[RMDB]
RNA sequence: GGGAACGACUCGAGUAGAGUCGAAAACCGGCCCGUUAGCUGCGGACCGGAUACGCUGGACCGGCAGGCGUUGGGUGAAUUGUCGGCGACUACACACCUAGGUACUGUCACGCGGCAUGGAAGCGCCUGCGGUUUUCACGUUCGCGUGAAAACCGCAAAAAGAAACAACAACAACAAC
Reactivity to DMS in 0.01 (KOAc 150mM, MgCl2 10mM, bicine 150mM(pH8.5), 24C), signal-to-noise 1, nucleotides 027 to 126: c000c000g000g000c030c000c000g000u020u000a040g000c120u060g000c000g000g000a090c030c030g000g000a150u030a000c020g020c210u070g030g030a090c080c040g000g040c010a030g010g000c000g000u000u000g000g020g060u040g000a200a100u020u000g010u000c030g000g000c100g000a050c060u020a030c060a140c050a020c090c060u030a130g020g000u010a060c090u010g010u000c000a000c040g030c020g040g000c030a030u050g010g020a160a040g000c000g000c010c020
Reactivity to 2A3 in 0.01 (KOAc 150mM, MgCl2 10mM, bicine 150mM(pH8.5), 24C), signal-to-noise 2, nucleotides 027 to 126: c010c020g000g000c010c010c000g010u070u080a040g010c110u030g030c060g040g030a000c020c000g020g050a020u030a090c040g010c060u030g000g030a000c000c020g040g010c000a000g040g000c020g110u090u110g090g020g000u130g010a100a220u010u040g040u000c010g010g030c020g020a000c030u030a030c020a010c010a020c070c100u020a070g080g090u120a110c050u030g050u060c020a000c060g080c020g030g000c000a000u040g030g030a050a030g030c000g010c000c010